An RNA of 207 nucleotides, treated with 2A3 and read out base by base. For 2A3 the reverse transcriptase was SuperScript II with manganese.
RNA sequence: GGGAACGACUCGAGUAGAGUCGAAAAAUUUUCACUUGUCAGCUUAAAUUUCUGACUAGAACUAACAUUUGUGUAUUUUUGUGCUUAGUCGGAAUACAAAUUUCACAGUGGAUUUUUGAAGUUUGUCCUUAAAUUGGAUAAAAUCAAGUGAUUAAAAGUAAAUUUACGGAUUCGUCCGUAAAUUUACAAAAGAAACAACAACAACAAC
Reactivity to 2A3 in 0.01 (KOAc 150mM, MgCl2 10mM, bicine 150mM(pH8.5), 24C), signal-to-noise 1, nucleotides 027 to 156: a000u030u180u030u000c000a000c010u020u010g010u040c090a000g080c050u030u090a030a030a050u180u300u050c020u030g000a010c000u000a000g020a040a030c000u080a100a040c090a160u090u300u110g140u090g100u090a210u070u070u040u080u050g040u020g000c030u100u060a000g000u020c080g000g040a000a000u060a040c000a050a030a030u000u000u000c040a040c060a190g070u080g010g240a130u120u150u040u160u150g000a070a000g000u000u030u070g000u000c000c000u090u140a150a270a140u250u140g000g000a000u000a080a060a000a050u060c020a020a000g010u020g000a020u000u180a060a000a110a000